[RMDB]
RNA sequence: GGGAACGACUCGAGUAGAGUCGAAAAUGUGUGCUCGAGAGCCUCCCUGUCCGACAGAGCUUUUAGAUCUUCUGAUCUUUCCCUGGAGGAUAUCGCUUAUGCUUCAAGCGAUACUCGGAAUAAUUAAAUGGAAUUCAUCUUUCGAGAUGAAUUCCAUAAAAGAAACAACAACAACAAC
Reactivity to DMS in 0.01 (KOAc 150mM, MgCl2 10mM, bicine 150mM(pH8.5), 24C), signal-to-noise 1, nucleotides 027 to 126: u000g020u000g020u010g000c010u000c030g030a130g010a220g010c020c020u000c010c000c110u010g000u000c030c020g010a080c070a130g000a050g010c120u010u000u000u000a020g010a010u000c000u010u010c240u000g040a020u000c000u000u000u000c000c010c000u000g030g000a180g000g010a250u000a000u000c000g000c000u000u000a100u010g010c170u000u000c080a050a010g000c000g010a020u000a000c030u000c020g010g010a110a060u010a060a080u010u010a030a090
Reactivity to 2A3 in 0.01 (KOAc 150mM, MgCl2 10mM, bicine 150mM(pH8.5), 24C), signal-to-noise 1, nucleotides 027 to 126: u190g090u010g020u050g040c030u010c000g080a000g000a000g070c000c020u020c000c000c040u040g100u040c000c020g000a050c020a020g040a050g050c090u000u060u000u060a050g000a010u010c010u300u010c140u300g000a000u040c070u030u000u000c000c000c000u000g060g000a000g080g050a120u020a030u000c000g010c000u060u050a090u300g060c000u170u160c120a020a000g000c000g000a000u000a010c030u000c020g020g140a090a120u180a110a070u230u150a140a090
Structure probing data (DMS and 2A3) for a 177-nucleotide construct. Reactivities are given for positions 27 through 126. High 2A3 reactivity points to a flexible backbone, as in loops and unpaired stretches.